[RMDB]
RNA sequence: GGGAACGACUCGAGUAGAGUCGAAAACGUAUGUACAGUAUUAAUUUUAGGUCAGCAGGAGGAUAGACUUCUCUGACUGUGUUCGGAGAAAUGGGGCAGAAAGCAGAGAUUGCUCUAAUUUGCAUCCUGUCCUGACUGUAUUUUCUGAUUGUAUUGAUAGUAAUCCUAGGUUCGCCUAGGAUUACUAAAAAGAAACAACAACAACAAC
Reactivity to 2A3 in 0.01 (KOAc 150mM, MgCl2 10mM, bicine 150mM(pH8.5), 24C), signal-to-noise 3, nucleotides 027 to 156: c030g120u130a070u200g030u070a060c020a030g010u050a130u140u150a120a090u080u130u060u230a040g000g000u000c020a010g000c020a010g020g000a010g020g020a030u070a090g090a060c000u020u000c000u000c000u000g060a090c010u040g000u010g000u010u040c020g090g000a060g060a040a090a070u130g060g010g010g000c040a010g050a110a110a020g020c020a000g000a000g000a060u030u060g010c000u000c010u060a070a160u030u050u100g070c050a080u000c060c000u010g020u060c000c020u000g020a020c010u020g020u010a050u000u030u010u040c010u090g130a140u010u060g020u120a030u210u060g140a030
Reactivity to DMS in 0.01 (KOAc 150mM, MgCl2 10mM, bicine 150mM(pH8.5), 24C), signal-to-noise 2, nucleotides 027 to 156: c080g000u010a070u010g010u000a090c030a070g010u000a080u010u020a070a060u030u000u000u000a170g030g000u000c020a040g030c030a040g020g010a040g020g020a280u000a120g010a100c040u000u010c010u010c000u000g010a070c020u000g070u000g010u020u000c000g050g010a140g020a010a080a130u010g010g010g020g010c020a080g010a090a050a130g010c010a050g020a120g020a180u000u000g020c110u000c060u000a080a150u000u000u000g020c040a190u000c000c030u000g000u000c010c080u000g000a090c020u000g000u010a030u010u000u010u010c080u000g000a130u000u000g030u010a090u000u000g010a280